[RMDB]
RNA sequence: GGGAACGACUCGAGUAGAGUCGAAAAGGCGAUGAAGGCCGAAGCUGGAGCCUCGUAAAGAUCGCGCGGGCUGCCCUUCUGGGCAAUUCCGCCCUCUUUCAUAACAAUGAUCGUAUCCGAAACGGCAAAUCCUAAUUAUCUUCGGAUAAUUAGGAUUAAAAGAAACAACAACAACAAC
Reactivity to 2A3 in 0.01 (KOAc 150mM, MgCl2 10mM, bicine 150mM(pH8.5), 24C), signal-to-noise 7, nucleotides 027 to 126: g030g000c020g120a190u070g060a070a030g040g020c030c050g050a060a010g020c040u050g020g030a020g010c000c010u050c030g050u110a040a050a030g040a030u110c040g000c020g000c020g080g000g000c010u020g010c000c000c000u180u140c170u200g000g000g010c000a000a040u240u050c010c000g010c000c010c000u020c000u000u050u040c050a080u080a150a060c080a110a110u130g020a070u090c020g030u060a040u030c040c020g050a090a080a060c030g020g010c040a080
Reactivity to DMS in 0.01 (KOAc 150mM, MgCl2 10mM, bicine 150mM(pH8.5), 24C), signal-to-noise 9, nucleotides 027 to 126: g010g010c020g010a090u010g010a150a100g010g010c000c050g010a050a100g010c040u000g010g010a170g010c020c020u000c120g010u010a030a030a040g000a020u010c060g020c170g030c030g000g000g010c190u000g000c000c010c000u000u010c300u010g020g000g010c000a020a040u000u010c010c000g010c000c010c030u000c010u000u000u000c050a110u010a090a100c190a090a090u010g000a060u000c030g010u000a110u010c030c030g000a060a070a090c040g010g000c100a100